Conditions: 150 mM KOAc, 10 mM MgCl2 and 150 mM bicine (pH 8.5), 24 C. An RNA of 177 nucleotides, treated with DMS and read out base by base. DMS adducts were read by reverse transcription with MarathonRT. It was measured as part of the RMDB library OK2TRN. Reactivities are rounded to 0.1 and cut off at 0 and 3. The DMS profile rests on 1,964 reads.
[RMDB]
RNA sequence: GGGAACGACUCGAGUAGAGUCGAAAAUGAAGAAAACCCUAUGAAGAACCUCUUUGAAAUUUAUGAAUUAAAUACAUAGUUAUGGUGCAUUAUUUUCCCUUCCGGUUUGUGCAUGGGUGGAGAAUUACGAUUCAGAUAUUUUCGAAUAUCUGAAUCGAAAAGAAACAACAACAACAAC
Reactivity to DMS in 0.01 (KOAc 150mM, MgCl2 10mM, bicine 150mM(pH8.5), 24C), signal-to-noise 3, nucleotides 027 to 126: u020g000a170a180g000a120a140a110a090c030c010c020u000a190u000g000a140a130g000a110a090c060c040u000c040u010u010u000g020a080a090a090u000u000u000a040u050g000a150a100u000u020a020a040a070u000a130c010a010u000a030g010u020u000a060u020g010g020u000g000c030a040u010u000a040u020u000u000u000c020c020c020u000u000c070c070g000g010u000u010u010g020u010g020c050a030u000g000g020g010u020g000g010a050g000a080a100u000u010a170